[RMDB]
RNA sequence: GGGAACGACUCGAGUAGAGUCGAAAACUCUCACUGGCUAACUUGGAUGUGUCCCUGAGCAUGGCCCUGGCCUGUAGGGAUCGGCCCCGCGUCCCAGCCAGAGCAGAGAUCUCUCACUUGUUCUGGUUCGUGGGAUUGUGUCCCAUCAUCCCACUGCACGUGUAUAGCUCUUCGGAGCUAUACACGUAAAAGAAACAACAACAACAAC
Reactivity to DMS in 0.01 (KOAc 150mM, MgCl2 10mM, bicine 150mM(pH8.5), 24C), signal-to-noise 2, nucleotides 027 to 156: c050u000c010u000c020a210c100u030g020g000c020u000a040a070c080u010u000g010g000a120u010g020u010g030u000c010c030c010u000g000a190g050c110a070u000g020g000c000c020c090u000g010g030c010c040u020g000u000a070g010g010g010a030u000c040g030g030c030c010c030c040g020c090g000u000c010c020c050a210g000c020c000a020g000a020g060c050a080g010a140g010a140u000c200u010c030u010c060a130c060u000u020g030u000u000c000u000g020g030u000u000c120g000u000g010g070g010a040u000u000g020u030g010u000c040c010c010a300u000c090a140u010c030c000c000a100c030u010g000c130
Reactivity to 2A3 in 0.01 (KOAc 150mM, MgCl2 10mM, bicine 150mM(pH8.5), 24C), signal-to-noise 3, nucleotides 027 to 156: c030u030c000u010c060a060c070u020g020g000c020u020a120a030c050u120u120g050g010a090u100g110u020g020u080c040c000c030u070g080a090g090c030a120u260g030g000c060c000c130u230g010g010c010c010u060g040u110a080g020g000g000a040u080c030g070g040c010c010c000c000g030c010g020u000c030c020c000a010g000c010c000a000g010a020g010c030a020g030a040g020a150u030c050u020c010u000c060a060c080u030u030g010u050u030c030u010g020g000u030u050c050g020u050g000g010g000a000u000u220g000u000g040u040c000c000c010a040u050c020a030u020c000c000c000a030c030u130g020c080